[RMDB]
RNA sequence: GGGAACGACUCGAGUAGAGUCGAAAAUUAUUUUUCCGUUCGCGGAAAAAUAAACGUACACCUUUGUGCUCAGAAGACCUUGGACCGGCUUCCCAUUGGGAAGCGCUAGGUCAGAGCACUCUGGUCUGGAGCGUAAAAGAGUUCGCUCUUUUACGAAAUAGAGAGGAUUAUUCGUAAUCCUCUCUAUAAAAGAAACAACAACAACAAC
Reactivity to 2A3 in 0.01 (KOAc 150mM, MgCl2 10mM, bicine 150mM(pH8.5), 24C), signal-to-noise 2, nucleotides 027 to 156: u030u010a000u000u010u000u030u000c010c000g000u040u100c300g010c010g110g020a000a000a000a000a000u010a010a030a030c070g110u130a070c020a020c050c000u030u000u000g000u000g010c000u010c020a190g050a300a040g000a170c010c010u070u090g110g080a190c070c080g290g010c000u010u010c040c000c050a300u160u300g000g000g000a000a000g000c030g050c000u030a010g000g000u000c020a000g000a000g020c000a000c010u000c000u000g000g040u010c010u070g120g130a080g140c000g000u010a010a010a000a010g030a000g010u110u110c200g070c140u040c000u030u000u000u000a000c000g000a090a010
Reactivity to DMS in 0.01 (KOAc 150mM, MgCl2 10mM, bicine 150mM(pH8.5), 24C), signal-to-noise 2, nucleotides 027 to 156: u000u000a000u000u010u000u000u010c000c000g020u000u010c290g040c040g030g010a000a000a000a000a000u000a010a030a130c050g020u000a100c090a080c030c050u000u000u010g010u000g010c020u020c000a130g000a180a220g000a050c000c000u020u000g130g020a070c110c030g060g020c010u000u000c000c000c040a300u000u010g070g030g020a030a010g060c010g030c010u000a010g030g010u000c000a100g010a030g010c000a030c030u000c010u030g000g020u000c080u000g010g010a150g030c010g010u000a000a010a030a040g000a020g020u000u000c300g000c030u000c000u000u000u000u000a010c010g010a050a100